[RMDB]
RNA sequence: GGGAACGACUCGAGUAGAGUCGAAAAACGGGCAGUGGCGAUGGCAACGCGGCAGCCGCAGGGUCGACUUCUUCGCAGCCGCAACAGACGGGAUACGGGCAAAGAGGGGCUCUCGUUCUGUUGGAAGCGGGCAGCCGUAUUUCGAUACGGCUGCCCGAAAAGAAACAACAACAACAAC
Reactivity to 2A3 in 0.01 (KOAc 150mM, MgCl2 10mM, bicine 150mM(pH8.5), 24C), signal-to-noise 1, nucleotides 027 to 126: a000c040g080g040g000c090a050g040u060g040g000c060g040a030u070g070g000c030a040a050c080g000c000g010g000c010a010g040c020c020g000c070a050g060g000g000u070c070g030a050c000u010u020c030u020u000c070g000c050a070g010c000c000g030c000a000a030c020a030g020a000c010g030g000g000a040u140a070c080g030g040g000c040a000a160a000g060a060g070g000g010g000c020u020c010u020c000g030u150u010c000u030g010u000u030g000g000a030a030g090
An RNA of 177 nucleotides, treated with 2A3 and read out base by base.